[RMDB]
RNA sequence: GGGAACGACUCGAGUAGAGUCGAAAAGACACUCAGUUCGCUGAGUGUCAAAUAAAAUCAGCGGUUAAAAACGACGCGUUAUAACCGCUGAACGCCUCGUUAAAAGAACCAAGUUCGCUUGGUUCAAGACUUCUUAUCUCUUCGGAGAUAAGAAGUCAAAAGAAACAACAACAACAAC
Reactivity to DMS in 0.01 (KOAc 150mM, MgCl2 10mM, bicine 150mM(pH8.5), 24C), signal-to-noise 3, nucleotides 027 to 126: g010a030c000a030c000u000c010a010g010u000u010c210g050c030u000g000a010g020u000g000u000c000a000a030a040u000a030a090a140a090u010c020a000g010c010g000g010u000u000a000a030a070a110a030c000g000a150c260g020c070g060u000u000a290u000a000a010c000c000g010c000u000g000a000a040c150g000c030c020u000c170g010u010u000a050a060a110a100g020a010a010c000c010a000a010g000u000u020c240g020c000u000u000g010g010u000u000c000a040a060
Reactivity to 2A3 in 0.01 (KOAc 150mM, MgCl2 10mM, bicine 150mM(pH8.5), 24C), signal-to-noise 3, nucleotides 027 to 126: g000a000c000a000c020u010c000a020g030u050u060c130g030c160u000g010a010g000u000g000u010c000a000a000a000u010a000a010a000a080u020c010a000g000c000g010g040u000u010a010a070a120a040a010c020g300a170c160g060c050g300u020u010a040u010a030a010c000c000g000c000u000g010a010a000c030g070c000c010u100c070g090u090u230a080a070a040a080g000a010a000c000c010a000a010g010u030u060c160g050c080u000u010g000g000u010u000c010a010a010